[RMDB]
RNA sequence: GGGAACGACUCGAGUAGAGUCGAAAAUUGAUCUGAUCUAUAAUGAGAUUUUGAACACCACAAUUUGCCUAGCAAAUGGCAUGGUGAUUAGAAAGAAUGUUGGUAACAAUAGCGGGCAGCCGAGUACCAAAGGACUAGCGUUCGCGCUAGUCCUUUGAAAAGAAACAACAACAACAAC
Reactivity to DMS in 0.01 (KOAc 150mM, MgCl2 10mM, bicine 150mM(pH8.5), 24C), signal-to-noise 1, nucleotides 027 to 126: u020u030g020a090u010c010u000g010a110u000c050u020a090u020a140a140u010g030a160g000a150u010u010u010u000g010a090a130c000a030c010c000a050c050a080a070u010u010u020g010c010c050u000a150g000c090a080a050a030u000g020g010c090a100u000g020g000u000g000a100u010u000a130g000a040a060a060g020a100a030u010g040u020u000g010g020u000a000a050c070a040a100u000a070g030c050g010g000g030c050a040g000c100c010g000a090g010u010a080c110